Structure probing data (DMS and 2A3) for a 177-nucleotide construct.
The RNA was probed in 150 mM KOAc, 10 mM MgCl2 and 150 mM bicine (pH 8.5) at 24 C.
Values cover nucleotides 27 to 126.
2A3 adducts were read by reverse transcription with SuperScript II with manganese.
It was measured as part of the RMDB libraries RFM100 and RFMREP.
[RMDB]
RNA sequence: GGGAACGACUCGAGUAGAGUCGAAAAUGAACCGGCCCAGGUCGGAAACGGAGCAGGUCAAAACUCCCGUGCUGAUCAGUAGUGGGAUCGCGCCUGUGAAUAGCCACUGCACUCCAGCCUGAGCAACAGAUGUGAAUUUUUUCGAAAAUUCACAUCUAAAAGAAACAACAACAACAAC
Reactivity to DMS in 0.01 (KOAc 150mM, MgCl2 10mM, bicine 150mM(pH8.5), 24C), signal-to-noise 6, nucleotides 027 to 126: u040g010a150a180c020c020g000g000c000c010c020a050g000g020u010c050g000g000a020a130a110c110g000g000a210g010c050a010g020g000u010c140a050a060a140a110c180u000c020c010c020g010u020g010c040u000g010a090u020c080a040g010u010a050g020u010g010g000g010a040u010c060g000c150g000c030c020u010g000u000g000a080a090u010a100g020c040c020a070c050u000g020c040a130c100u000c010c020a050g000c040c010u000g000a080g010c030a060a060c150
Reactivity to 2A3 in 0.01 (KOAc 150mM, MgCl2 10mM, bicine 150mM(pH8.5), 24C), signal-to-noise 9, nucleotides 027 to 126: u110g010a020a040c010c000g030g000c010c010c000a030g000g030u010c020g030g030a070a070a040c040g020g020a050g020c050a020g010g040u100c040a030a050a030a130c030u020c000c010c010g020u030g000c020u090g020a220u130c080a030g050u090a020g080u070g020g020g010a020u040c030g000c010g020c030c010u040g000u020g050a060a090u100a070g010c010c010a060c060u070g000c030a020c050u010c000c000a020g000c000c010u030g010a020g020c020a020a040c010